[RMDB]
RNA sequence: GGGAACGACUCGAGUAGAGUCGAAAAUCGUGAGAUGUGGUGCCUCACGCGCUCGAGGCGUCCGUGGUCAGAGAGACCACUGACGCAAAAACUCGAGCGCAAAUAAACCGCAUUACAUAAAGAAUAAAAUUACCAUCCAUUUCGAUGGAUGGUAAUUAAAAGAAACAACAACAACAAC
Reactivity to 2A3 in 0.01 (KOAc 150mM, MgCl2 10mM, bicine 150mM(pH8.5), 24C), signal-to-noise 3, nucleotides 027 to 126: u150c040g010u040g030a050g010a070u170g000u010g030g000u030g080c000c010u040c010a030c070g000c000g000c000u000c000g000a000g020g000c000g000u000c010c010g000u010g000g000u000c050a050g100a040g020a020g000a300c000c000a000c000u000g010a000c000g000c000a080a100a010a030a030c000u000c000g000a000g000c000g000c000a000a000a000u050a010a030a000c020c000g020c000a010u040u110a050c040a040u250a110a140a050g150a130a080u210a200a160
Reactivity to DMS in 0.01 (KOAc 150mM, MgCl2 10mM, bicine 150mM(pH8.5), 24C), signal-to-noise 3, nucleotides 027 to 126: u040c040g020u020g000a140g000a050u010g010u000g010g000u010g000c090c070u000c080a100c140g000c000g030c000u000c000g010a030g020g000c000g000u010c010c080g000u000g000g010u010c010a150g040a140g010a230g000a030c020c000a000c010u000g000a010c010g000c030a040a040a060a100a300c020u010c000g000a010g000c000g020c020a000a010a040u030a030a080a030c090c030g010c010a050u010u040a070c090a070u030a090a130a080g000a050a050u040a050a070
The record gives the reactivity of an RNA of 177 nucleotides to 2A3 and DMS. For DMS the reverse transcriptase was MarathonRT. Values are in units of 0.01, from 0 to 300, in steps of 10. High 2A3 reactivity points to a flexible backbone, as in loops and unpaired stretches. For 2A3, 4,954 sequencing reads were counted. For 2A3 the reverse transcriptase was SuperScript II with manganese. Reactivities are given for positions 27 through 126.